[RMDB]
Annotation: Chemical mapping of a 207-nucleotide RNA with 2A3. 2A3 adducts were read by reverse transcription with SuperScript II with manganese. Reactivities are given for positions 27 through 156. Source: RMDB library ARCHII, as collected in RNAgym. The RNA was probed in 150 mM KOAc, 10 mM MgCl2 and 150 mM bicine (pH 8.5) at 24 C.
RNA sequence: GGGAACGACUCGAGUAGAGUCGAAAACUUAAGGGACAGUCCAAUCCACGGGGAGACCCGGUCCACAGGCAUAGAGGGGUUUGCUCACCCUUGAGGACUGUGGAGAGUGACACACAUCACUCGGUAUCAAUGGCCAGCAGCCGCGGUAAUUCCAGCUCAUAUUCUGCUGGUUCGCCAGCAGAAUAUGAAAAGAAACAACAACAACAAC
Reactivity to 2A3 in 0.01 (KOAc 150mM, MgCl2 10mM, bicine 150mM(pH8.5), 24C), signal-to-noise 1, nucleotides 027 to 156: c050u140u180a070a080g020g000g080a040c020a120g030u050c020c040a040a070u010c020c040a000c020g000g000g020g020a080g020a080c020c000c000g020g030u030c000c000a010c000a000g000g020c010a010u110a040g010a020g020g020g000g020u020u090u160g050c060u040c020a150c000c000c000u000u010g040a060g010g040a010c000u000g000u000g020g000a010g000a000g030u000g010a020c030a010c010a010c040a300u020c000a010c000u010c000g050g040u120a030u140c060a090a100u110g070g000c070c060a030g040c060a030g030c070c020g000c050g030g000u050a050a150u140u000c020c030a010g060c030u010